[RMDB]
RNA sequence: GGGAACGACUCGAGUAGAGUCGAAAAACAGGUCGAUUCGUCGACCUGUACAUUGCGGCCGCGCCGGGUCGUUCCCGCGCGAAACCCCGCGCGGCCGCGCGCUUACAAACGGAUUCGUCCGUUUGAAUCGGUGUAUUUGUUUCGACAAAUACACCGAAAAAGAAACAACAACAACAAC
Reactivity to DMS in 0.01 (KOAc 150mM, MgCl2 10mM, bicine 150mM(pH8.5), 24C), signal-to-noise 1, nucleotides 027 to 126: a010c000a020g000g010u000c000g000a020u000u010c140g020u000c000g000a020c010c010u000g000u000a000c180a100u000u010g000c040g030g050c030c010g030c100g000c010c050g000g030g020u000c030g000u000u010c010c000c010g040c050g000c140g000a040a130a190c050c020c040c290g000c000g010c000g040g000c040c020g030c000g000c220g020c050u000u000a150c010a000a000a000c000g000g010a000u000u000c190g030u000c000c000g000u000u000u030g000a090a130

Conditions: 150 mM KOAc, 10 mM MgCl2 and 150 mM bicine (pH 8.5), 24 C.
The record gives the reactivity of an RNA of 177 nucleotides to DMS.
Reactivities are given for positions 27 through 126.
DMS adducts were read by reverse transcription with MarathonRT.